[RMDB]
RNA sequence: GGGAACGACUCGAGUAGAGUCGAAAACAAAUACCGUUCGCGGUAUUUGAAAUACGGAAACCUUCCUGCCGUCAGAAGUUAAGAGGUGCUUGCUCUCGUUAAAAAUCAGCUGAUUCGUCAGCUGAAACGACAGUAGAGUGUUCGCACUCUACUGUCGAAAAGAAACAACAACAACAAC
Reactivity to 2A3 in 0.01 (KOAc 150mM, MgCl2 10mM, bicine 150mM(pH8.5), 24C), signal-to-noise 2, nucleotides 027 to 126: c000a000a030a010u000a020c010c010g010u010u060c230g020c000g140g000u000a000u000u000u000g000a000a000a010u190a020c050g010g000a100a050a060c020c000u070u040c010c030u030g000c020c000g040u040c040a100g040a270a040g130u070u150a210a010g030a000g020g090u070g000c050u030u110g040c020u030c000u000c050g030u050u080a130a150a040a010a080u030c000a000g000c020u000g000a000u010u070c160g080u010c090a000g020c000u000g000a010a000a000
Reactivity to DMS in 0.01 (KOAc 150mM, MgCl2 10mM, bicine 150mM(pH8.5), 24C), signal-to-noise 2, nucleotides 027 to 126: c000a000a000a000u000a000c000c010g020u000u020c170g010c010g000g010u000a000u000u000u010g020a060a060a070u000a110c090g000g000a110a050a090c090c070u000u000c010c020u010g020c020c020g000u010c140a060g020a080a100g000u000u000a070a080g000a060g020g010u000g000c090u010u000g010c020u000c010u010c040g020u000u010a010a060a060a100a090u000c000a000g010c000u000g000a050u000u020c150g010u000c000a000g030c010u000g000a020a040a070
The data come from the RNA Mapping Database (RMDB), library M2PK50. Structure probing data (2A3 and DMS) for a 177-nucleotide construct. For DMS, 1,858 sequencing reads were counted. For 2A3, 1,707 sequencing reads were counted. The RNA was probed in 150 mM KOAc, 10 mM MgCl2 and 150 mM bicine (pH 8.5) at 24 C. Values cover nucleotides 27 to 126.